[RMDB]
RNA sequence: GGGAACGACUCGAGUAGAGUCGAAAAACUCUCGUGAGUACGUACACUCACGAACGUUCGUGAUCGAUCACACGUGAACGUACUCACUCGUACGAGUGAACGUGAGAACGAGUUCGUGAGUGUGUGUACACGUGUGAGAUCACACGAGUGUACGAACUCAAAUAGGUGCGUUCGCGCACCUAUUUGAAAAAGAAACAACAACAACAAC
Reactivity to 2A3 in 0.01 (KOAc 150mM, MgCl2 10mM, bicine 150mM(pH8.5), 24C), signal-to-noise 5, nucleotides 027 to 156: a000c030u020c000u010c050g070u050g100a040g020u030a040c000g000u010a000c000a000c000u010c010a030c040g050a060a020c010g120u120u140c030g010u030g030a070u030c070g040a080u050c040a020c010a000c090g050u040g110a110a020c040g020u080a060c010u040c030a020c010u020c020g100u120a040c100g000a020g030u050g070a110a020c020g030u040g040a060g020a050a030c020g000a010g040u000u010c000g010u000g010a040g000u000g000u010g000u010g000u000a020c010a020c020g010u010g000u020g030a090g020a140u190c010a000c000a000c040g020a020g030u040g030u090a030c060g020a080a020c020
Reactivity to DMS in 0.01 (KOAc 150mM, MgCl2 10mM, bicine 150mM(pH8.5), 24C), signal-to-noise 2, nucleotides 027 to 156: a050c050u000c020u000c030g040u010g010a140g020u000a010c040g000u000a030c030a040c010u000c010a140c040g000a010a040c100g010u010u000c060g000u000g000a180u020c050g030a170u010c020a070c030a100c010g000u000g030a080a120c030g000u000a040c080u020c010a030c020u000c060g000u000a090c090g000a110g000u000g030a070a050c020g030u020g000a260g000a180a100c040g000a160g000u000u000c050g000u000g000a020g020u000g010u000g030u000g000u000a080c020a040c020g020u000g010u020g010a140g000a140u010c020a070c020a040c030g000a050g010u000g020u000a000c020g000a060a110c070
An RNA of 207 nucleotides, treated with 2A3 and DMS and read out base by base. 2A3 adducts were read by reverse transcription with SuperScript II with manganese. Source: RMDB library OK3TST, as collected in RNAgym. The reactions ran in a buffer of 150 mM KOAc, 10 mM MgCl2 and 150 mM bicine (pH 8.5), at 24 C.